[RMDB]
RNA sequence: GGGAACGACUCGAGUAGAGUCGAAAAAGUGAUCUGUCCAUGCUCUAGACUAGGUGAUCACAUCCAUGGCGCCAUGCAUCACAUACAUGGAUCACUCGCAGAGGUACUCAUCAUGCGUACUGAUCAGAUAAGUGCCUUAGUUCGCUAAGGCACUUAUAAAAGAAACAACAACAACAAC
Reactivity to 2A3 in 0.01 (KOAc 150mM, MgCl2 10mM, bicine 150mM(pH8.5), 24C), signal-to-noise 2, nucleotides 027 to 126: a000g090u040g000a030u010c000u060g100u000c000c010a000u060g000c000u040c030u090a160g000a200c020u020a050g120g000u050g040a020u050c000a000c000a070u040c000c050a010u050g070g000c100g000c060c130a100u150g020c040a050u090c040a050c000a060u240a020c020a070u090g040g000a010u030c000a000c020u030c030g060c040a020g060a030g190g010u060a110c050u050c110a230u040c010a040u100g040c000g010u010a010c010u040g010a040u020c040a010g040
Reactivity to DMS in 0.01 (KOAc 150mM, MgCl2 10mM, bicine 150mM(pH8.5), 24C), signal-to-noise 3, nucleotides 027 to 126: a060g020u010g000a010u020c020u010g010u000c020c030a050u010g010c060u010c070u000a100g010a170c070u000a140g000g000u000g000a070u000c060a040c140a080u020c020c040a070u000g000g020c050g020c070c060a040u000g020c100a060u030c100a050c080a140u010a150c060a050u010g010g020a040u000c040a070c160u000c060g000c050a030g030a100g000g040u030a050c140u010c180a040u000c080a050u000g010c070g020u000a100c110u000g010a060u010c060a040g010

An RNA of 177 nucleotides, treated with 2A3 and DMS and read out base by base. Reactivities are rounded to 0.1 and cut off at 0 and 3. The DMS profile rests on 1,917 reads. For 2A3, 1,439 sequencing reads were counted. For DMS the reverse transcriptase was MarathonRT. The RNA was probed in 150 mM KOAc, 10 mM MgCl2 and 150 mM bicine (pH 8.5) at 24 C.